RNA sequence: GGGAACGACUCGAGUAGAGUCGAAAAGAUAUGGACUCGGCAUGACAUGCUCGGAGUCGGAAACGACUUGCGAGCAACAGCAUGCGAGUCCUAAGUCACAAAAGAUAGACCGUUCGCGGUCUAUCAAGAUGACAGCGUGGUUCGCCACGCUGUCAUCAAAAGAAACAACAACAACAAC
Reactivity to 2A3 in 0.01 (KOAc 150mM, MgCl2 10mM, bicine 150mM(pH8.5), 24C), signal-to-noise 1, nucleotides 027 to 126: g000a010u020a000u170g000g020a010c000u020c030g190g290c020a000u000g000a180c060a250u300g000c010u040c000g020g000a010g000u000c030g060g010a030a010a000c010g010a000c110u070u300g300c300g000a000g110c010a050a000c030a010g010c000a000u020g000c050g000a070g000u000c000c000u010a000a000g010u020c030a000c090a120a240a000a060g010a010u000a000g000a000c000c010g070u100u050c290g060c130g070g010u040c000u040a020u040c000a010a030
Chemical mapping of a 177-nucleotide RNA with 2A3. Reactivities are rounded to 0.1 and cut off at 0 and 3.